[RMDB]
RNA sequence: GGGAACGACUCGAGUAGAGUCGAAAAGAUAUGUAGCUUGGAGACAUAUUCAAGAUUUGACUCAUGCUGGGUGUUAUGGCUCACACCUGUAGUGGCUCACAGCUACCUGGUAGGUCAAGGUGGGAGGACUGUUUGAGCCCAGGAAUUGGGACCAGUAGUCCUAAAUGAUGUUCGCAUCAUUUAGGACAAAAGAAACAACAACAACAAC
Reactivity to DMS in 0.01 (KOAc 150mM, MgCl2 10mM, bicine 150mM(pH8.5), 24C), signal-to-noise 2, nucleotides 027 to 156: g000a060u000a030u020g020u010a060g010c100u010u010g040g020a230g010a080c070a070u000a050u000u000c040a080a110g010a220u000u000u010g010a080c010u000c010a120u000g030c060u000g010g000g000u000g030u010u000a070u010g010g000c010u000c050a080c070a050c060c040u010g010u000a080g030u000g000g000c010u000c060a060c060a100g030c030u010a090c020c040u010g030g040u000a050g000g020u000c060a050a060g030g010u000g000g030g030a070g020g000a070c060u000g000u000u000u000g000a090g000c010c020c020a040g040g010a070a140u000u020g000g010g000a160c020c030a070g010u000a190
Reactivity to 2A3 in 0.01 (KOAc 150mM, MgCl2 10mM, bicine 150mM(pH8.5), 24C), signal-to-noise 4, nucleotides 027 to 156: g030a020u080a020u100g040u060a040g060c080u070u110g090g050a080g020a040c050a030u070a060u100u110c060a070a050g050a200u070u040u120g020a040c020u020c050a050u130g000c010u060g030g000g000u030g030u100u070a070u100g030g000c020u040c020a020c010a000c010c020u020g030u110a080g050u060g040g000c030u030c020a060c020a030g000c020u040a070c000c030u030g010g060u110a080g020g040u060c040a040a020g050g000u040g020g020g010a050g030g050a050c010u020g040u100u120u080g050a020g010c000c010c000a010g020g070a050a040u190u050g020g000g020a040c000c010a020g070u120a030